The record gives the reactivity of an RNA of 177 nucleotides to 2A3 and DMS. For DMS the reverse transcriptase was MarathonRT. The reactions ran in a buffer of 150 mM KOAc, 10 mM MgCl2 and 150 mM bicine (pH 8.5), at 24 C. The data come from the RNA Mapping Database (RMDB), library OK2TST. For 2A3, 1,064 sequencing reads were counted.
RNA sequence: GGGAACGACUCGAGUAGAGUCGAAAAUCGAUCACCACUCCAGAUUUUCCGCGAUACAUUCAAGAAGGAAUGGGAGAAGUCUCAGGAACUGCAGGAGAACAUAAAGACGCUGCAAGAUGCUUCGGGACACCACGACUAGUUUCGACUAGUCGUGGUGAAAAGAAACAACAACAACAAC
Reactivity to 2A3 in 0.01 (KOAc 150mM, MgCl2 10mM, bicine 150mM(pH8.5), 24C), signal-to-noise 2, nucleotides 027 to 126: u070c010g030a020u030c040a000c020c000a050c040u050c040c020a040g000a140u000u050u080u000c020c020g040c000g030a030u060a150c020a050u050u080c050a060a100g060a080a030g280g030a040a050u110g000g000g000a030g040a060a050g030u020c020u020c030a030g060g040a040a060c020u090g010c000a030g000g070a090g030a100a040c040a050u240a100a110a010g070a000c020g010c110u030g000c040a070a030g020a100u120g000c000u030u070c060g000g040g020a000
Reactivity to DMS in 0.01 (KOAc 150mM, MgCl2 10mM, bicine 150mM(pH8.5), 24C), signal-to-noise 1, nucleotides 027 to 126: u000c000g010a060u000c100a110c020c030a070c050u000c000c030a100g010a150u010u020u010u000c050c060g000c210g000a050u000a210c040a040u000u000c060a090a110g030a070a130g000g030a070a030u010g010g000g010a070g040a090a040g010u000c020u010c030a070g000g010a040a030c090u000g000c030a040g010g000a110g000a070a020c110a060u000a070a070a070g000a150c070g010c040u070g000c060a070a210g000a040u010g000c040u000u000c090g030g000g000a290